This 207-nucleotide RNA was probed chemically with 2A3 and DMS.
The reactions ran in a buffer of 150 mM KOAc, 10 mM MgCl2 and 150 mM bicine (pH 8.5), at 24 C.
2A3 adducts were read by reverse transcription with SuperScript II with manganese.

RNA sequence: GGGAACGACUCGAGUAGAGUCGAAAACAGACUGAAUGGUGCUAAAGAGAAGGGAGAGUGCUUGUGUCACUGUCAGCAGACACAGCCAGUGGAAAGCUGGGAAGGCUGUGCUUGUUUAUUCAGAGUCUCCAUGCAUUGAUUGCUUAGCUCCAUGUUAUCCAUUACCUGGAUUCGUCCAGGUAAUGGAAAAAGAAACAACAACAACAAC
Reactivity to 2A3 in 0.01 (KOAc 150mM, MgCl2 10mM, bicine 150mM(pH8.5), 24C), signal-to-noise 7, nucleotides 027 to 156: c040a010g170a030c050u150g100a070a050u030g010g000u020g000c010u050a060a080a010g110a030g040a110a120g070g040g010a070g010a020g030u070g010c040u130u100g080u050g070u170c020a020c060u040g020u090c020a000g030c010a010g020a020c000a000c000a010g010c010c010a010g020u070g030g140a230a090a010g040c050u040g000g020g070a090a050g070g020c010u010g020u010g010c010u020u020g040u060u080u070a130u070u100c020a010g010a030g080u000c010u020c050c020a020u040g000c000a040u100u100g080a150u160u110g040c010u020u020a010g010c000u000c020c000a010u060g060u070u140a080
Reactivity to DMS in 0.01 (KOAc 150mM, MgCl2 10mM, bicine 150mM(pH8.5), 24C), signal-to-noise 2, nucleotides 027 to 156: c070a160g020a130c040u010g000a080a110u000g000g040u000g010c030u010a040a070a150g010a130g020a070a120g000g010g010a090g000a080g040u000g040c010u010u010g010u000g030u000c050a080c020u010g000u010c080a110g050c030a100g020a010c010a000c010a010g020c020c020a090g040u000g020g000a080a040a110g040c060u000g000g010g030a130a170g000g000c000u000g040u000g010c040u000u000g010u010u000u010a100u020u000c040a140g030a100g000u000c010u000c010c040a180u010g000c030a130u000u010g000a130u000u000g000c030u010u000a110g010c040u000c000c000a070u010g000u010u000a270